[RMDB]
RNA sequence: GGGAACGACUCGAGUAGAGUCGAAAAGAAAUUGCGCCCACCCGCCGCCUUCGUGGCCUCGGUGACCGUCAGCGCAAGGCCCUGCUGGAAAAGUUCGGCUCCGCCUAACCCCGCCGGCCGACGAUGCGUGUAUGUUCGAAUUCGUUCGAACAUACACAAAAGAAACAACAACAACAAC
Reactivity to DMS in 0.01 (KOAc 150mM, MgCl2 10mM, bicine 150mM(pH8.5), 24C), signal-to-noise 3, nucleotides 027 to 126: g010a050a090a090u010u000g010c070g030c010c100c030a120c040c020c050g020c060c080g000c030c060u000u000c120g020u000g020g020c020c060u000c080g000g010u010g000a080c090c100g010u000c150a090g020c030g010c030a080a060g010g010c030c030c010u010g020c040u000g020g000a050a090a110a100g000u000u000c070g020g010c010u010c070c130g000c020c030u010a090a150c070c010c020c050g010c050c080g000g010c020c010g000a040c070g000a080u000g000c150
Reactivity to 2A3 in 0.01 (KOAc 150mM, MgCl2 10mM, bicine 150mM(pH8.5), 24C), signal-to-noise 1, nucleotides 027 to 126: g050a020a130a070u090u070g030c020g050c040c050c000a030c000c010c030g020c020c020g000c020c030u070u140c100g080u120g060g030c010c010u100c070g030g000u040g010a040c050c030g110u080c010a010g000c000g020c050a050a000g030g010c000c000c000u000g010c020u010g060g000a100a110a070a050g030u050u020c000g030g000c030u040c040c070g040c000c000u030a020a030c050c000c010c000g000c020c000g030g010c020c010g010a040c000g020a040u080g090c020